RNA sequence: GGGAACGACUCGAGUAGAGUCGAAAAGACUGCGUGCACUGGAGACGAUAUCGAGCCGGAAAUUAAUCGAUAAUGUCUCCUGUAGUGGAUACGAUCCGGCAAGUAUCGACUACUUGUGCUCGUAGGAACUAUGAGUAAAUUUCGAUUUACUCAUAGUAAAAGAAACAACAACAACAAC
Reactivity to 2A3 in 0.01 (KOAc 150mM, MgCl2 10mM, bicine 150mM(pH8.5), 24C), signal-to-noise 9, nucleotides 027 to 126: g080a010c000u000g000c000g000u010g000c000a000c010u030g010g000a000g000a000c020g020a020u010a010u080c010g010a010g000c000c010g010g100a080a130a040u300u260a090a190u130c020g010a010u020a060a070u120g010u000c000u010c010c010u000g010u010a010g010u020g120g000a000u000a010c010g010a030u010c000c000g000g000c040a070a010g000u000a000u010c010g070a000c000u050a040c000u020u080g000u000g000c000u000c000g000u010a000g000g010a000
Reactivity to DMS in 0.01 (KOAc 150mM, MgCl2 10mM, bicine 150mM(pH8.5), 24C), signal-to-noise 6, nucleotides 027 to 126: g000a180c010u000g000c010g010u000g000c000a010c010u030g000g000a010g000a040c000g000a090u000a000u000c010g000a120g000c000c000g000g000a080a140a110u020u030a090a110u020c040g010a030u010a020a070u030g010u000c000u000c010c010u010g010u000a010g010u010g010g010a020u000a000c010g000a090u000c010c000g000g010c010a130a170g000u000a000u000c000g000a040c000u010a010c000u010u040g010u000g000c010u000c010g020u010a010g000g000a100
The record gives the reactivity of an RNA of 177 nucleotides to 2A3 and DMS.
The data come from the RNA Mapping Database (RMDB), library OK1LIB.
For 2A3 the reverse transcriptase was SuperScript II with manganese.
The RNA was probed in 150 mM KOAc, 10 mM MgCl2 and 150 mM bicine (pH 8.5) at 24 C.
For DMS the reverse transcriptase was MarathonRT.
Reactivities are given for positions 27 through 126.
For 2A3, 81,056 sequencing reads were counted.